[RMDB]
RNA sequence: GGGAACGACUCGAGUAGAGUCGAAAAACGCGAGAGUCAUUCGCGUCGAAGAGGGGUACGCCAUUCUGAAACUCGCCUGUGCGGCGCCGCAGGCGCUCUUGUCGCCCUCGUCUUUGGCCGCUUCGGGCGGCCACUGACUCUUCGGAGUCAGUGGCCGAAAAGAAACAACAACAACAAC
Reactivity to DMS in 0.01 (KOAc 150mM, MgCl2 10mM, bicine 150mM(pH8.5), 24C), signal-to-noise 3, nucleotides 027 to 126: a070c020g020c010g040a000g010a130g010u030c240a180u060u000c010g000c000g020u010c020g000a100a060g010a090g030g000g000g000u020a100c090g000c010c040a100u000u000c070u030g010a140a150a140c120u000c040g000c000c010u010g000u020g010c060g000g010c090g020c090c040g000c060a030g000g030c010g040c080u010c060u030u010g010u000c000g000c300c030c070u010c020g020u000c050u000u010u020g000g000c010c000g000c040u000u020c110g030g000g010
Reactivity to 2A3 in 0.01 (KOAc 150mM, MgCl2 10mM, bicine 150mM(pH8.5), 24C), signal-to-noise 6, nucleotides 027 to 126: a000c010g020c000g020a040g000a040g210u180c070a150u150u030c020g010c000g000u010c030g030a100a030g020a020g020g040g010g020u080a070c060g060c030c020a090u160u100c090u180g090a120a060a070c050u030c050g000c000c000u020g020u030g020c090g100g030c040g050c070c010g010c000a010g000g000c010g010c020u030c020u080u110g060u080c020g050c010c000c010u020c040g070u010c020u100u050u070g010g000c000c000g030c000u040u070c060g100g040g000